Structure probing data (2A3) for a 177-nucleotide construct. Values are in units of 0.01, from 0 to 300, in steps of 10. Conditions: 150 mM KOAc, 10 mM MgCl2 and 150 mM bicine (pH 8.5), 24 C. It was measured as part of the RMDB library RFM100. For 2A3, 531 sequencing reads were counted.
RNA sequence: GGGAACGACUCGAGUAGAGUCGAAAAAGGAAAGUCCGGGCUCCAUAGGGCAGGGUGCCAGGUAACGCCUGGGGGGCGAGAGUCCACGGAAAGUGCCGCAGAAAAGAUACCGCCGACCCCGUCCUCGCUCCACACCAGACUUCGGUCUGGUGUGGAGAAAAGAAACAACAACAACAAC
Reactivity to 2A3 in 0.01 (KOAc 150mM, MgCl2 10mM, bicine 150mM(pH8.5), 24C), signal-to-noise 1, nucleotides 027 to 126: a010g160g040a160a100a000g090u070c010c000g030g000g030c000u160c040c010a090u140a120g040g030g010c110a020g000g090g000u040g000c010c000a000g040g040u040a000a080c010g080c040c000u010g000g000g000g000g000g000c000g000a060g010a010g060u000c010c010a020c040g000g000a160a170a090g020u160g140c000c000g010c040a000g240a030a050a060a000g040a050u220a110c000c110g010c010c010g010a060c000c000c000c000g090u090c020c010u040c000g040